[RMDB]
RNA sequence: GGGAACGACUCGAGUAGAGUCGAAAAAGCUGCACAAAAUCGGCGGAAAGGACCCCGCUAUCGGGAGCGGCUAGCAGCGAGGGUUGCCGCUCCAGCCGCGCUAUGAAGCAGCCAUAGCAGAUUUACAAUCGAUAAUAUCAUUCGUGAUAUUAUCGAUAAAAGAAACAACAACAACAAC
Reactivity to DMS in 0.01 (KOAc 150mM, MgCl2 10mM, bicine 150mM(pH8.5), 24C), signal-to-noise 9, nucleotides 027 to 126: a050g000c010u000g010c010a210c300a080a050a100a050u010c120g000g010c010g010g000a040a070a120g010g010a180c050c030c000c020g010c040u000a040u010c120g010g010g000a030g010c010g010g000c010u000a050g010c080a070g000c100g010a080g010g010g010u000u000g010c010c000g010c030u000c010c010a040g020c120c100g010c220g000c010u000a010u000g000a060a040g000c000a020g000c010c010a010u000a010g010c010a200g000a140u010u010u010a080c220a110
Reactivity to 2A3 in 0.01 (KOAc 150mM, MgCl2 10mM, bicine 150mM(pH8.5), 24C), signal-to-noise 7, nucleotides 027 to 126: a000g000c010u020g020c060a020c060a170a130a040a120u170c070g020g000c020g010g030a080a090a060g130g030a060c000c020c000c010g010c030u080a090u190c080g090g020g010a010g010c000g020g010c020u040a030g030c050a010g040c030g090a160g000g110g020u040u040g030c000c000g000c000u000c000c010a000g000c000c020g100c010g000c010u000a010u020g010a040a010g000c000a000g000c000c000a000u000a000g000c020a020g040a130u170u170u090a090c110a060
This 177-nucleotide RNA was probed chemically with DMS and 2A3. Values are in units of 0.01, from 0 to 300, in steps of 10. For 2A3 the reverse transcriptase was SuperScript II with manganese. The data come from the RNA Mapping Database (RMDB), library OK2TRN.